Structure probing data (2A3 and DMS) for a 177-nucleotide construct.
[RMDB]
RNA sequence: GGGAACGACUCGAGUAGAGUCGAAAAACUUCCUACUUCGGUAGGAAGUAAAAGUAGAAAAGUUGGUGCUUAGACCAGGCCCUCUACCGUAAUAAUAGAUAAACCCUUAGCACUUCGGUGCUAAGAAGAAUGAAUUAAUGUUCGCAUUAAUUCAUUCAAAAGAAACAACAACAACAAC
Reactivity to 2A3 in 0.01 (KOAc 150mM, MgCl2 10mM, bicine 150mM(pH8.5), 24C), signal-to-noise 5, nucleotides 027 to 126: a010c000u000u000c000c000u000a010c000u020u030c080g090g000u000a000g000g040a000a000g000u000a000a000a000a000g010u010a000g040a020a080a020a020g040u050u040g010g010u080g060c130u180u130a030g070a060c010c010a020g070g000c000c000c010u000c000u020a030c000c010g040u030a070a060u080a190a030u060a150g120a060u150a110a120a080c020c010c000u000u000a000g000c000a000c000u020u060c260g070g000u000g000c000u000a010a000g000a010a010
Reactivity to DMS in 0.01 (KOAc 150mM, MgCl2 10mM, bicine 150mM(pH8.5), 24C), signal-to-noise 6, nucleotides 027 to 126: a050c000u000u000c000c000u000a000c000u000u020c170g040g000u010a000g000g000a000a000g010u000a010a030a100a110g010u000a030g000a030a030a030a060g010u010u000g010g010u000g010c240u010u010a080g000a050c030c020a020g010g000c010c060c040u000c000u000a010c020c050g010u000a090a070u000a090a100u010a110g010a120u000a080a070a120c090c050c000u000u000a010g010c000a010c000u000u010c160g020g010u000g000c000u000a000a000g010a060a080

2A3 is a SHAPE reagent: it acylates the 2'-hydroxyl of flexible nucleotides of all four kinds.